[RMDB]
RNA sequence: GGGAACGACUCGAGUAGAGUCGAAAAUAAGCAAAAGACAACCACCUUUCCCGCUGACAAUAGCGUUAUCCCUCUGCACUUCGGUAAUAUGAGGGCACAGUAAAUCCCCCAAGGAUGAGAAUGUGAUUAAACAGUUACAGCUUCGGCUGUAACUGAACAAUGGUGAUUCCUUCGGGAAUCACCAUUGAAAAGAAACAACAACAACAAC
Reactivity to DMS in 0.01 (KOAc 150mM, MgCl2 10mM, bicine 150mM(pH8.5), 24C), signal-to-noise 1, nucleotides 027 to 156: u030a130a130g000c080a050a090a170a100g030a110c030a160a110c000c020a130c040c020u000u000u000c000c020c000g040c070u000g040a110c110a140a200u000a080g020c030g070u000u000a110u000c000c010c000u000c040u000g040c080a060c020u000u010c200g090g010u000a100a120u000a100u000g000a060g000g030g010c050a050c040a040g020u000a060a100a110u000c000c000c020c000c150a120a060g000g000a050u000g010a120g000a120a080u000g010u030g010a090u020u000a100a070a170c010a010g030u010u000a000c000a000g000c000u000u010c300g090g090c000u000g000u000a000a000c000u040g000a050a040
Reactivity to 2A3 in 0.01 (KOAc 150mM, MgCl2 10mM, bicine 150mM(pH8.5), 24C), signal-to-noise 1, nucleotides 027 to 156: u140a010a010g040c060a040a030a070a170g060a090c060a100a120c090c100a100c020c010u020u110u110c000c050c000g030c050u080g030a070c020a140a150u110a140g070c020g060u200u150a160u170c010c010c000u000c000u020g000c030a050c020u030u170c160g080g020u100a060a060u150a050u300g010a000g000g000g000c040a000c010a010g000u000a030a030a030u000c000c080c000c010c010a000a000g000g000a000u020g000a010g000a000a030u020g000u030g010a000u100u080a000a000a000c010a000g010u000u000a000c000a000g000c000u010u020c020g040g000c000u000g000u000a000a000c000u000g000a010a000
The record gives the reactivity of an RNA of 207 nucleotides to DMS and 2A3. Conditions: 150 mM KOAc, 10 mM MgCl2 and 150 mM bicine (pH 8.5), 24 C. The DMS profile rests on 1,703 reads. For 2A3 the reverse transcriptase was SuperScript II with manganese.